This 177-nucleotide RNA was probed chemically with 2A3 and DMS.
The reactions ran in a buffer of 150 mM KOAc, 10 mM MgCl2 and 150 mM bicine (pH 8.5), at 24 C.
2A3 is a SHAPE reagent: it acylates the 2'-hydroxyl of flexible nucleotides of all four kinds.
RNA sequence: GGGAACGACUCGAGUAGAGUCGAAAACUGGACCAAACUUUCCGGUGCCGACAACGGAUCAUGGGUUAAUGGCGCACUCGCACAGUUUGGUGUAAAAGCCGGAACAGUUACUAUCAGCGACAAUCCAGCUAUAUCGUGCUUUCGAGCACGAUAUAGCAAAAGAAACAACAACAACAAC
Reactivity to 2A3 in 0.01 (KOAc 150mM, MgCl2 10mM, bicine 150mM(pH8.5), 24C), signal-to-noise 2, nucleotides 027 to 126: c010u020g010g040a020c000c060a060a010a020c000u070u020u040c030c000g050g020u070g040c010c010g040a070c050a120a030c030g150g020a080u100c040a150u230g210g000g000u070u070a110a050u150g010g000c040g020c040a040c020u070c010g060c040a070c020a130g030u110u100u050g060g020u020g010u020a020a060a040a030g070c000c000g000g020a050a010c070a070g010u020u040a020c040u030a020u100c010a000g040c000g030a020c030a010a040u030c010c010a020
Reactivity to DMS in 0.01 (KOAc 150mM, MgCl2 10mM, bicine 150mM(pH8.5), 24C), signal-to-noise 3, nucleotides 027 to 126: c050u000g020g000a100c150c070a040a080a020c070u000u000u000c140c020g020g000u020g020c010c030g000a140c150a020a060c080g020g000a100u000c100a200u010g000g020g010u010u000a090a140u000g010g000c050g050c110a070c050u000c150g030c090a080c200a140g010u000u010u010g000g010u010g000u020a050a100a100a210g020c000c030g000g010a010a030c160a040g000u000u000a060c180u000a090u030c040a090g030c050g000a140c190a080a090u000c040c040a080
Source information
Reactivities are rounded to 0.1 and cut off at 0 and 3.